Description: An RNA of 177 nucleotides, treated with DMS and 2A3 and read out base by base. For DMS, 4,903 sequencing reads were counted. The RNA was probed in 150 mM KOAc, 10 mM MgCl2 and 150 mM bicine (pH 8.5) at 24 C. For DMS the reverse transcriptase was MarathonRT.
RNA sequence: GGGAACGACUCGAGUAGAGUCGAAAAGAUAUGGAAGUACUGUAGACUAGAGCGAUGAAAGGCUUCGGAAACGAAGCCUGGAGCUCAUCCGUACUUCCUAAGUCAAACCAAGGCUUCGGCCUUGGAACCCUUGUAGAAUGUUCGCAUUCUACAAGGGAAAAGAAACAACAACAACAAC
Reactivity to DMS in 0.01 (KOAc 150mM, MgCl2 10mM, bicine 150mM(pH8.5), 24C), signal-to-noise 4, nucleotides 027 to 126: g010a020u000a150u010g000g000a020a000g010u000a010c010u010g020u000a080g010a140c280u000a130g000a010g010c000g000a090u020g000a180a110a020g000g000c000u000u000c010g010g000a040a030a080c000g020a000a010g000c000c000u000g000g000a040g000c000u000c010a090u000c090c100g010u000a010c000u000u000c000c000u000a000a060g000u000c000a080a120a210c000c000a000a010g010g000c000u000u020c280g020g010c000c000u000u000g000g000a050a060
Reactivity to 2A3 in 0.01 (KOAc 150mM, MgCl2 10mM, bicine 150mM(pH8.5), 24C), signal-to-noise 4, nucleotides 027 to 126: g000a000u010a020u080g000g000a000a000g000u000a000c010u050g060u190a070g110a290c190u160a210g010a040g030c030g300a300u010g000a020a020a000g000g000c000u000u010c000g000g000a020a030a000c000g010a010a000g020c000c000u010g000g010a000g000c020u010c060a050u010c010c010g000u010a000c000u000u000c000c000u010a010a000g010u000c020a050a010a020c010c000a010a000g010g000c030u110u300c300g220g000c000c000u000u000g000g000a010a010